[RMDB]
RNA sequence: GGGAACGACUCGAGUAGAGUCGAAAAACGCACAUGUGAGUCAUGUCGUGAUUGCGUACUGUCCUACAGUACGCAAACGGCUUCUGUAGGACAGAGGCCUCACGUAGUCGGAAUCACUGAUUAGCGAGGUCAGCAUAGUAUUCGUACUGUGCUGACCAAAAGAAACAACAACAACAAC
Reactivity to 2A3 in 0.01 (KOAc 150mM, MgCl2 10mM, bicine 150mM(pH8.5), 24C), signal-to-noise 8, nucleotides 027 to 126: a000c010g000c000a010c000a020u070g010u010g030a010g050u040c010a010u040g030u050c000g000u000g010a060u000u060g010c010g000u010a010c000u010g030u120c030c010u040a030c000a000g000u010a000c000g000c000a000a000a010c040g020g000c000u000u000c000u000g030u050a070g040g160a010c000a000g010a000g000g000c000c000u000c000a010c000g010u010a010g070u050c080g020g010a030a040u030c010a010c020u020g010a060u060u050a020g010c010g010a030
Reactivity to DMS in 0.01 (KOAc 150mM, MgCl2 10mM, bicine 150mM(pH8.5), 24C), signal-to-noise 9, nucleotides 027 to 126: a110c020g020c010a080c050a020u010g010u000g010a040g000u010c010a050u010g010u010c010g000u000g000a120u000u000g010c010g010u000a010c000u000g000u000c150c120u010a120c000a010g000u000a010c040g010c000a010a010a090c180g010g000c000u000u000c000u000g010u000a110g010g040a300c010a010g000a030g000g010c000c040u000c010a000c010g010u000a070g000u010c130g000g000a140a120u000c050a010c000u000g010a090u010u010a060g010c010g000a140